Source: RMDB library OK2TRN, as collected in RNAgym. Structure probing data (2A3 and DMS) for a 177-nucleotide construct. Reactivities are given for positions 27 through 126.

RNA sequence: GGGAACGACUCGAGUAGAGUCGAAAAGAGAAAUUCAAACAUGGGGAGCUAGCGUCUGCAUUUGGAGAGGAGGAUAUAUUGAAGAGGGCAAUCAGAAUACAGAAGCUGAUCCAUUGGAGAUAUAGCCACCUGCCUUUAGAUUCGUCUAAAGGCAGGUAAAAGAAACAACAACAACAAC
Reactivity to 2A3 in 0.01 (KOAc 150mM, MgCl2 10mM, bicine 150mM(pH8.5), 24C), signal-to-noise 2, nucleotides 027 to 126: g050a010g010a040a090a020u210u100c080a000a040a080c040a150u130g000g020g080g010a010g000c020u030a020g010c060g050u010c050u080g060c070a050u090u150u170g010g010a060g000a020g060g030a010g020g010a010u020a010u000a030u070u080g030a040a020g010a060g040g010g030c010a000a010u030c010a020g040a070a030u140a130c120a070g110a110a030g030c040u030g010a060u010c010c030a130u020u030g020g020a050g000a000u050a000u040a120g010c010c000
Reactivity to DMS in 0.01 (KOAc 150mM, MgCl2 10mM, bicine 150mM(pH8.5), 24C), signal-to-noise 3, nucleotides 027 to 126: g000a170g000a080a090a080u010u000c080a050a100a170c100a060u000g000g000g020g030a070g020c080u010a020g030c080g010u000c060u000g020c040a120u000u000u000g030g010a070g000a040g020g020a070g000g010a050u010a020u000a040u010u000g000a220a110g020a090g010g010g010c200a050a050u000c020a060g010a060a080u010a120c220a120g030a070a140g000c030u000g000a050u010c010c020a110u010u000g000g010a200g010a030u000a030u010a080g010c030c070